Structure probing data (DMS and 2A3) for a 177-nucleotide construct. For DMS the reverse transcriptase was MarathonRT. The RNA was probed in 150 mM KOAc, 10 mM MgCl2 and 150 mM bicine (pH 8.5) at 24 C.
[RMDB]
RNA sequence: GGGAACGACUCGAGUAGAGUCGAAAAUGGAACCUACUUAGAUCAUCGAUUUGAUCGGAAGGGCCCUAAGUCAGCUGUCUUCUUCCGCACCGGGAUGAGCAAUGUCACCAAUGUAUCCACUCCUCCACUUACCGAUUGAGUUCGCUCAAUCGGUAAGAAAAGAAACAACAACAACAAC
Reactivity to DMS in 0.01 (KOAc 150mM, MgCl2 10mM, bicine 150mM(pH8.5), 24C), signal-to-noise 3, nucleotides 027 to 126: u000g010g010a100a130c020c000u000a140c050u010u000a150g000a030u000c000a020u010c300g020a240u010u010u010g000a020u010c000g000g000a130a040g000g000g020c140c030c000u000a050a110g000u000c050a050g020c060u000g000u010c070u000u000c050u000u000c040c030g030c060a060c120c020g000g000g000a060u000g000a080g000c040a050a070u000g010u000c060a060c020c020a050a080u000g020u010a050u000c030c030a070c060u000c010c010u000c030c020a140
Reactivity to 2A3 in 0.01 (KOAc 150mM, MgCl2 10mM, bicine 150mM(pH8.5), 24C), signal-to-noise 2, nucleotides 027 to 126: u060g030g010a040a090c010c000u000a030c040u090u080a030g030a030u000c000a020u040c120g300a240u080u020u090g010a040u020c000g020g030a000a030g020g000g030c020c010c010u070a090a030g030u040c030a050g030c030u020g040u090c000u110u000c000u040u030c020c010g000c030a020c000c040g100g030g000a060u080g030a040g000c040a060a080u150g020u050c000a020c040c020a040a060u100g010u030a110u060c000c020a020c020u050c020c010u040c020c020a010